[RMDB]
RNA sequence: GGGAACGACUCGAGUAGAGUCGAAAACCUGCCGGAACACUCUUCGCUCCGGACCAGCUCAGCCUCUGAUAAGCUGGACUCGGCACGCCCGCAACAAGCACCGAGGAGUUAAGAGAGCCGCAAGCGCUAAAGCAGGGCAUUUCGAUGCCCUGCUUUAAAAAGAAACAACAACAACAAC
Reactivity to DMS in 0.01 (KOAc 150mM, MgCl2 10mM, bicine 150mM(pH8.5), 24C), signal-to-noise 1, nucleotides 027 to 126: c000c000u000g000c120c000g000g000a080a020c010a110c000u020c030u000u000c000g000c040u000c090c000g020g000a100c050c000a180g030c010u020c080a060g040c090c040u040c030u000g040a160u000a150a050g000c000u000g000g000a170c060u020c000g000g000c140a130c170g010c050c000c000g040c120a140a050c140a140a140g070c050a110c000c020g000a090g000g000a060g000u000u050a000a000g020a210g000a130g090c040c000g050c170a110a060g040c040g030c060
Reactivity to 2A3 in 0.01 (KOAc 150mM, MgCl2 10mM, bicine 150mM(pH8.5), 24C), signal-to-noise 1, nucleotides 027 to 126: c000c000u000g030c060c030g000g030a100a000c130a040c080u010c020u080u060c020g030c010u000c000c030g020g040a030c020c020a000g000c030u050c030a010g010c030c020u200c070u010g090a130u030a150a000g010c000u000g000g000a030c000u000c010g000g000c060a020c140g020c000c050c010g120c010a010a040c010a100a090g000c020a000c040c040g010a040g000g000a000g000u030u000a000a050g000a000g050a050g020c000c000g030c040a020a090g000c070g000c130